[RMDB]
RNA sequence: GGGAACGACUCGAGUAGAGUCGAAAACGCUUGAGCCUGGGAGUCGGAGGUUGCAGUGAGCCGAGAUCAUGCCACUGCACUCCAGCUCAGCCUGGGUGACAGAUUGAGAGUUUGUCUCAAAAAAAAACAUAGCAAACUGAUUCGUCAGUUUGCUAUGAAAAGAAACAACAACAACAAC
Reactivity to 2A3 in 0.01 (KOAc 150mM, MgCl2 10mM, bicine 150mM(pH8.5), 24C), signal-to-noise 4, nucleotides 027 to 126: c050g030c040u070u080g040a010g020c000c010u020g020g010g000a020g030u090c050g020g010a030g070g060u220u200g010c000a010g010u010g040a090g000c020c040g150a120g020a140u250c070a050u220g010c010c000a000c000u010g000c000a010c010u000c000c010a000g000c020u040c010a020g040c010c000u030g000g000g000u040g020a010c010a020g090a120u090u100g010a040g000a020g080u090u280u250g120u030c010u070c020a040a040a000a000a020a000a020a010a010
Reactivity to DMS in 0.01 (KOAc 150mM, MgCl2 10mM, bicine 150mM(pH8.5), 24C), signal-to-noise 6, nucleotides 027 to 126: c100g010c030u000u000g010a300g000c010c000u000g000g000g010a030g010u000c080g000g010a020g010g010u010u000g010c000a020g000u000g000a090g030c010c170g000a170g020a150u000c150a130u010g010c010c010a020c000u010g020c000a040c000u000c000c010a040g010c020u000c140a110g010c080c040u000g000g000g010u000g000a250c220a030g000a130u010u010g010a040g000a070g010u000u010u010g010u000c000u010c000a000a000a000a000a030a050a080a120a150